[RMDB]
RNA sequence: GGGAACGACUCGAGUAGAGUCGAAAACUUGUCUGGAAUGCAGGCCAUUCCUGAGGGAAUCACUUCAGUUUAUCAUGCUUGCAAUUAAGGGACACUUUAACAACCCAAUUCAGGAACACUGCUAACAGUCUAGUGCCUGAUUCGUCAGGCACUAGACAAAAGAAACAACAACAACAAC
Reactivity to 2A3 in 0.01 (KOAc 150mM, MgCl2 10mM, bicine 150mM(pH8.5), 24C), signal-to-noise 1, nucleotides 027 to 126: c000u090u090g000u010c000u010g020g210a090a020u040g000c010a040g020g000c030c000a070u060u050c040c000u010g010a020g000g010g050a100a300u190c070a040c120u030u020c010a080g020u040u040u150a090u130c100a050u140g010c020u020u000g000c070a090a140u030u040a170a170g030g030g010a010c010a020c020u100u090u040a060a030c040a000a030c000c010c020a060a120u130u090c030a040g060g060a160a050c040a010c100u080g000c010u060a080a060c010a060
Reactivity to DMS in 0.01 (KOAc 150mM, MgCl2 10mM, bicine 150mM(pH8.5), 24C), signal-to-noise 1, nucleotides 027 to 126: c130u000u000g040u000c000u010g010g020a060a040u000g000c000a050g000g010c120c130a220u000u000c080c000u000g000a020g000g000g000a080a200u040c190a180c110u000u000c120a060g000u070u000u000a040u000c300a160u000g000c000u000u000g000c010a000a110u000u050a120a100g000g000g000a060c060a010c200u000u020u000a020a100c230a160a020c010c000c000a130a200u000u000c000a100g000g000a060a130c200a080c010u000g010c110u000a060a000c200a120